[RMDB]
RNA sequence: GGGAACGACUCGAGUAGAGUCGAAAAAAGCUCACAGUGGUAUACCGGGAUGACUACGGGAGGCUCUACGAGAAGAGUUACGAGCUACGCGUAUACCACCACCCCGUGGCCACCGGGACGGCGACGCGGGUGAAGAAUUAUUCGUAAUUCUUCACCCAAAAGAAACAACAACAACAAC
Reactivity to 2A3 in 0.01 (KOAc 150mM, MgCl2 10mM, bicine 150mM(pH8.5), 24C), signal-to-noise 5, nucleotides 027 to 126: a000a010g090c070u070c020a120c040a060g040u040g030g020u030a040u020a080c020c020g030g010g090a110u090g070a120c060u200a140c080g020g030g030a110g090g000c000u000c000u040a060c090g070a050g060a300a030g020a030g010u060u140a020c040g000a010g020c010u040a030c030g040c060g030u020a010u020a040c000c010a010c010c010a030c000c010c000c010g010u030g030g000c020c000a040c040c040g020g000g050a030c040g010g020c010g010a020c030g010c070
Reactivity to DMS in 0.01 (KOAc 150mM, MgCl2 10mM, bicine 150mM(pH8.5), 24C), signal-to-noise 8, nucleotides 027 to 126: a080a080g010c050u010c070a110c190a110g020u000g000g010u000a030u000a050c010c010g010g000g000a090u010g000a080c020u000a090c050g010g000g010a180g010g000c010u000c010u000a090c160g010a190g010a130a050g000a070g010u000u010a080c070g010a080g000c040u000a050c030g010c160g010u000a020u000a050c030c030a040c020c090a120c070c010c010c020g010u000g010g000c020c020a080c060c030g000g000g010a070c110g010g010c030g000a030c080g020c170